[RMDB]
RNA sequence: GGGAACGACUCGAGUAGAGUCGAAAAGAUAUGGAGGAGUACGAUAAGGUUACGGUCGGAAACGACCGAACCUUUUGACGUACGCCGGUGAAAUACUCCUAAGUCAAAACAUGCCUUCGGGCAUGAACAUAUCGUUAUAGUUCGCUAUAACGAUAUGAAAAGAAACAACAACAACAAC
Reactivity to DMS in 0.01 (KOAc 150mM, MgCl2 10mM, bicine 150mM(pH8.5), 24C), signal-to-noise 9, nucleotides 027 to 126: g000a090u000a050u000g000g000a080g010g010a040g010u000a000c000g010a140u000a020a010g010g010u000u000a120c010g020g010u000c000g010g000a090a090a190c010g010a010c000c000g010a020a000c000c000u000u000u000u000g010a160c100g010u000a000c000g010c020c030g000g010u010g000a130a080a030u000a030c040u000c000c000u000a070a120g010u010c190a060a080a110a190c010a010u000g000c000c000u000u010c210g020g000g010c000a000u000g000a050a170
Reactivity to 2A3 in 0.01 (KOAc 150mM, MgCl2 10mM, bicine 150mM(pH8.5), 24C), signal-to-noise 8, nucleotides 027 to 126: g020a070u070a040u100g030g020a050g010g010a040g010u010a000c020g020a090u020a120a030g020g020u000u070a200c010g000g000u000c000g010g020a080a060a040c010g000a000c000c000g000a000a000c000c000u000u020u020u020g030a010c010g000u000a000c010g000c020c010g030g100u130g050a070a060a020u080a060c020u010c010c000u070a150a050g170u140c130a040a030a130a200c000a030u010g000c000c010u070u100c300g050g010g000c000a000u000g000a000a010
Conditions: 150 mM KOAc, 10 mM MgCl2 and 150 mM bicine (pH 8.5), 24 C.
The record gives the reactivity of an RNA of 177 nucleotides to DMS and 2A3.
The DMS profile rests on 63,572 reads.
For 2A3, 37,304 sequencing reads were counted.
It was measured as part of the RMDB library TTRDEL.